[RMDB]
RNA sequence: GGGAACGACUCGAGUAGAGUCGAAAAGACGCCUUUAGAAGAAGAGGCUAGGGGGUAUUCCGGUGUGGGAUACUUAGUAAUAUGCAACGCUAAUUGCAUAAGAUUGUACGACGGAAUUUACAGUCUUUAGAGAUAAGCACGUUCGCGUGCUUAUCAACUGCCUUGUCAGAUUCGUCUGACAAGGCAGAAAAGAAACAACAACAACAAC
Reactivity to 2A3 in 0.01 (KOAc 150mM, MgCl2 10mM, bicine 150mM(pH8.5), 24C), signal-to-noise 1, nucleotides 027 to 156: g020a010c010g000c000c000u060u080u040a160g030a210a000g080a000a070g010a030g000g000c040u050a060g010g010g030g000g000u030a000u090u000c050c030g000g120u090g010u080g040g020g000a040u050a170c000u050u060a010g010u060a030a080u010a010u180g010c010a000a000c050g050c130u080a070a050u110u060g000c000a010u030a020a000g030a010u050u090g130u240a030c020g050a000c000g090g040a070a030u080u020u140a060c020a070g040u040c000u060u150u110a040g040a010g000a030u000a000a000g000c000a000c020g070u080u090c150g040c000g060u010g020c000u000u000a000u000c000a000a000